[RMDB]
RNA sequence: GGGAACGACUCGAGUAGAGUCGAAAAGAUUACAAUGUCGCGGCGACACUCGCCAGCAUAAGCCAUCGUUACAAUAGCUAAUACGAUAAUAAUAGUUACUUUCAUGAUUUGAUAGUCUAAGGAUAAGAUGAUAUACUUGAUAUUGGCUAGAAUUCAAGUUCGUAAGGGCAUUCGUGCCCUUACGAACAAAAGAAACAACAACAACAAC
Reactivity to 2A3 in 0.01 (KOAc 150mM, MgCl2 10mM, bicine 150mM(pH8.5), 24C), signal-to-noise 1, nucleotides 027 to 156: g000a000u290u000a150c220a190a040u060g000u100c090g000c090g080g000c000g060a000c040a010c300u030c030g000c120c000a030g010c000a000u010a050a020g000c040c040a000u000c010g120u080u230a090c090a130a030u130a030g000c000u040a010a000u090a070c030g120a060u030a180a090u100a000a000u000a090g060u120u160a090c000u040u040u100c040a100u000g160a290u040u050u080g060a060u000a010g100u000c000u010a000a130g090g000a030u090a080a160g000a040u070g100a030u100a000u090a190c100u120u030g040a000u150a100u090u000g000g000c000u000a000g070a000a000u160u240c060a130a000
This 207-nucleotide RNA was probed chemically with 2A3. Values cover nucleotides 27 to 156.